[RMDB]
RNA sequence: GGGAACGACUCGAGUAGAGUCGAAAACAUGCGGAUGCUGCGUGAGCGUCGUGUCGCACUUUUACGUGCCCGCACAAGCACAGUACGCAGUUGGUGACACCAUAUUACGAGAGAGACGGCAACCCGACAUAGUGAGUGGAUUCGUCCACUCACUAUGAAAAGAAACAACAACAACAAC
Reactivity to 2A3 in 0.01 (KOAc 150mM, MgCl2 10mM, bicine 150mM(pH8.5), 24C), signal-to-noise 9, nucleotides 027 to 126: c050a060u100g010c030g050g050a060u090g010c030u010g010c030g050u060g040a060g030c040g030u110c030g020u090g070u120c050g060c020a020c010u090u120u160u300a120c160g000u010g000c010c030c030g030c010a020c010a040a040g020c020a010c010a060g050u140a010c010g000c010a010g010u040u050g040g040u080g020a030c010a050c050c040a030u080a060u200u120a060c060g010a010g000a000g000a010g020a070c010g010g020c020a030a070c010c000c000g010a020
Reactivity to DMS in 0.01 (KOAc 150mM, MgCl2 10mM, bicine 150mM(pH8.5), 24C), signal-to-noise 9, nucleotides 027 to 126: c080a090u020g010c020g000g000a070u010g010c050u000g000c030g020u000g000a160g010c040g010u030c130g010u030g010u030c300g020c010a020c020u010u040u050u020a080c190g020u000g000c010c100c110g000c020a050c040a100a250g000c020a060c060a060g020u030a090c020g000c000a020g000u000u000g010g020u100g000a040c040a110c090c070a090u020a070u020u030a050c050g000a130g000a080g000a080g000a050c030g000g000c070a080a090c020c010c000g010a280